[RMDB]
About this RNA: Chemical mapping of a 170-nucleotide RNA with 2A3 and DMS. Values are in units of 0.01, from 0 to 300, in steps of 10. The reactions ran in a buffer of 150 mM KOAc, 10 mM MgCl2 and 150 mM bicine (pH 8.5), at 24 C. For DMS the reverse transcriptase was MarathonRT. For 2A3 the reverse transcriptase was SuperScript II with manganese. The DMS profile rests on 26,248 reads.

RNA sequence: GGGAACGACUCGAGUAGAGUCGAAAAGGUCCGCGUGGGGAGGAAACGCAACCCGAGAGUGAGAUGAACGACAAGGGGCGAAGAUCCUCGGAAGGAAUUCUCCCAAGAAGCGAAGAGAACACAAGAAAGAGUAUACGCUUCGGCGUAUACAAAAGAAACAACAACAACAAC
Reactivity to 2A3 in 0.01 (KOAc 150mM, MgCl2 10mM, bicine 150mM(pH8.5), 24C), signal-to-noise 7, nucleotides 027 to 129: g040g010u040c010c010g050c040g040u100g000g000g000g000a020g040g000a030a070a010c070g000c060a060a050c010c000c010g030a040g000a000g060u090g000a090g000a100u100g050a050a010c040g030a000c040a070a070g000g000g020g010c030g030a020a010g010a040u030c000c010u000c020g030g010a010a010g010g000a000a000u110u010c030u020c020c000c000a000a030g050a040a010g020c040g020a050a010g010a010g020a040a020c040a010c020a130a010g060a070a080a010g100a020
Reactivity to DMS in 0.01 (KOAc 150mM, MgCl2 10mM, bicine 150mM(pH8.5), 24C), signal-to-noise 7, nucleotides 027 to 129: g000g000u010c030c050g040c080g000u040g000g000g000g000a060g040g000a020a050a060c170g010c100a080a100c080c010c040g010a040g000a070g000u050g000a090g020a100u020g020a090a050c120g000a110c110a070a130g030g000g030g000c020g040a080a070g020a110u050c040c010u010c090g000g000a050a070g000g000a040a070u030u040c080u050c020c020c020a090a070g030a090a090g000c090g030a060a050g000a000g000a000a040c110a090c110a120a080g030a020a030a030g000a120